RNA sequence: GGGAACGACUCGAGUAGAGUCGAAAAAACCGAUUGAGGCUGCGGAGCCAGGAGCUGAUGAUGGGGUGGCUCCGAGCCUUCUGCAGGUCCCCCACGUUCGGACCCAGCAGCGUCGUCACGUUGCAAAGGUUAUAUACAUCUUCGGAUGUAUAUAACCAAAAGAAACAACAACAACAAC
Reactivity to 2A3 in 0.01 (KOAc 150mM, MgCl2 10mM, bicine 150mM(pH8.5), 24C), signal-to-noise 3, nucleotides 027 to 126: a000a000c010c000g010a030u040u100g010a000g050g000c050u210g110c180g010g000a000g010c000c020a040g120g080a100g070c160u160g040a160u070g030a100u130g220g030g030g090u020g000g010c000u000c000c000g000a000g000c000c000u020u010c000u010g010c010a030g000g050u090c020c000c010c000c020a030c040g030u060u060c040g020g030a060c020c010c000a000g000c020a010g000c020g000u040c010g080u080c100a000c030g020u020u010g000c000a030a020a020
Reactivity to DMS in 0.01 (KOAc 150mM, MgCl2 10mM, bicine 150mM(pH8.5), 24C), signal-to-noise 4, nucleotides 027 to 126: a060a060c010c010g000a190u000u000g010a040g010g010c000u000g020c000g010g000a020g010c010c020a080g020g010a150g020c140u000g010a150u010g010a100u000g020g000g010g030u000g010g000c010u000c000c000g000a070g020c020c010u000u010c040u000g010c190a170g010g020u000c040c000c000c000c020a130c110g000u000u010c020g020g000a150c010c000c030a100g000c020a040g020c030g020u000c230g000u020c130a050c020g020u000u000g000c020a110a090a070